RNA sequence: GGGAACGACUCGAGUAGAGUCGAAAAGAUAUGGAGAAGGCACGAGGGUGGGAGGUACAGAACCCUGUAUCGGAAACGAUACAGAUCUCUGUACCUCCCACCUACCCACCGUGCUUCUCCUAAGUCACUUUUAGAACAACUUCGGUUGUUCUAAAAGAAAAGAAACAACAACAACAAC
Reactivity to DMS in 0.01 (KOAc 150mM, MgCl2 10mM, bicine 150mM(pH8.5), 24C), signal-to-noise 2, nucleotides 027 to 126: g000a050u000a300u020g000g010a010g000a020a050g040g000c000a000c000g000a120g000g000g000u000g010g000g010a000g020g010u000a000c020a010g000a010a100c250c130c000u000g020u000a010u000c000g000g000a180a080a210c000g000a000u000a020c010a040g020a040u010c110u020c000u000g000u000a010c000c000u000c030c000c000a000c000c000u000a000c010c040c080a300c130c010g010u000g000c000u000u000c000u000c000c000u010a020a120g010u000c050a160
The record gives the reactivity of an RNA of 177 nucleotides to DMS. Values cover nucleotides 27 to 126. Conditions: 150 mM KOAc, 10 mM MgCl2 and 150 mM bicine (pH 8.5), 24 C. For DMS the reverse transcriptase was MarathonRT.